[RMDB]
RNA sequence: GGGAACGACUCGAGUAGAGUCGAAAAUUACUACCAUCGGUCCUCACCACUAGAUCGGUGUUAUGCUUUGUUGGGAUAGCAGGCCGUGCCAGUUGGACAGCCAAGGUCCACCUCUGGUUCGGCACACCAACCUGAAGACCUUCGGGUCUUCAGGUUGAAAAGAAACAACAACAACAAC
Reactivity to 2A3 in 0.01 (KOAc 150mM, MgCl2 10mM, bicine 150mM(pH8.5), 24C), signal-to-noise 2, nucleotides 027 to 126: u130u030a050c060u110a020c050c080a050u070c040g040g000u050c020c040u180c030a140c150c000a050c070u050a020g030a160u010c000g000g000u040g080u150u130a110u060g080c110u170u080u060g040u020u050g040g060g040a140u220a220g010c120a070g070g000c000c000g000u000g050c000c000a000g020u070u050g050g000a000c030a130g200c100c000a210a050g210g000u000c000c000a000c000c080u170c030u010g010g000u000u000c000g000g000c000a000c000a000c000
Reactivity to DMS in 0.01 (KOAc 150mM, MgCl2 10mM, bicine 150mM(pH8.5), 24C), signal-to-noise 1, nucleotides 027 to 126: u000u000a050c100u000a090c040c000a020u000c120g040g000u020c010c070u020c050a070c040c110a090c030u010a100g000a100u000c040g000g020u000g010u010u040a020u010g010c080u000u010u060g020u050u030g000g000g000a120u090a010g000c080a040g020g020c000c000g000u000g010c000c050a010g060u000u000g020g000a030c010a100g000c140c210a070a160g000g000u000c000c000a010c300c130u030c020u000g000g000u000u000c050g010g010c000a030c000a000c000
An RNA of 177 nucleotides, treated with 2A3 and DMS and read out base by base. For 2A3 the reverse transcriptase was SuperScript II with manganese. The reactions ran in a buffer of 150 mM KOAc, 10 mM MgCl2 and 150 mM bicine (pH 8.5), at 24 C. Source: RMDB library RFM100, as collected in RNAgym. Reactivities are given for positions 27 through 126. For 2A3, 595 sequencing reads were counted.